[RMDB]
RNA sequence: GGGAACGACUCGAGUAGAGUCGAAAACUUGCGACUUACACGUAGGGCGAGGGGUGGGCGAAAGUUGCCAUGAGACCGUUACUUUCGUAGUCAUUGAUAAAGGGGCAGGUCUCGCUCUUUUGUCAUUUUAAUCUCUAACAGUUCGCUGUUAGAGAAACACUUCCUCCCUGUUCGCAGGGAGGAAGUGAAAAGAAACAACAACAACAAC
Reactivity to 2A3 in 0.01 (KOAc 150mM, MgCl2 10mM, bicine 150mM(pH8.5), 24C), signal-to-noise 2, nucleotides 027 to 156: c000u030u120g030c060g040a070c060u030u020a040c190a070c170g070u110a050g000g010g040c180g040a140g010g110g030g050u270g040g000g010c020g010a090a040a040g060u050u060g050c050c060a150u090g070a000g000a010c040c030g000u050u020a030c000u040u050u100c040g010u010a030g090u070c050a090u010u170g070a070u050a060a010a010g030g000g000g000c050a030g000g000u010c030u020c030g020c000u010c030u040u090u050u040g010u020c000a020u000u020u130u090a110a100u070c000u000c000u000a000a000c000a010g040u020u000c100g040c070u000g000u000u000a000g000a000g000a000a000a000